[RMDB]
RNA sequence: GGGAACGACUCGAGUAGAGUCGAAAAUAAGUACUAUCGCCGUGUGUUCAAGAAAGAGGAUGGACAUUCCUCGUCUCUUUGAGUCACAGCCGGCAGCCGGUUGCUCUUGUGAUGGGUGGAUGGAGCCCAGUGGUUCCAUGUUCGCAUGGAACCACUGAAAAGAAACAACAACAACAAC
Reactivity to 2A3 in 0.01 (KOAc 150mM, MgCl2 10mM, bicine 150mM(pH8.5), 24C), signal-to-noise 3, nucleotides 027 to 126: u100a020a010g160u070a060c070u080a030u170c100g000c010c000g010u000g000u000g020u090u050c000a000a020g030a070a050a020g060a000g000g010a030u100g170g140a160c130a140u100u020c000c000u000c000g050u000c060u030c000u050u100u180g030a030g040u090c030a000c010a080g110c090c000g000g000c010a000g010c000c020g080g000u060u100g020c080u040c030u060u150g010u050g120a050u080g020g000g060u050g060g020a060u090g000g020a000g060c000c000
Reactivity to DMS in 0.01 (KOAc 150mM, MgCl2 10mM, bicine 150mM(pH8.5), 24C), signal-to-noise 3, nucleotides 027 to 126: u020a040a120g010u020a110c030u020a040u020c050g010c000c020g050u000g020u010g020u030u020c020a050a010g000a030a090a300g000a020g000g020a030u020g030g040a230c250a090u010u000c000c010u000c020g000u010c130u000c010u000u000u040g000a050g000u030c010a020c010a080g000c260c020g010g010c030a110g000c040c060g000g040u000u010g000c030u000c110u020u010g020u000g010a100u020g010g000g020u000g000g000a040u020g010g010a150g010c020c100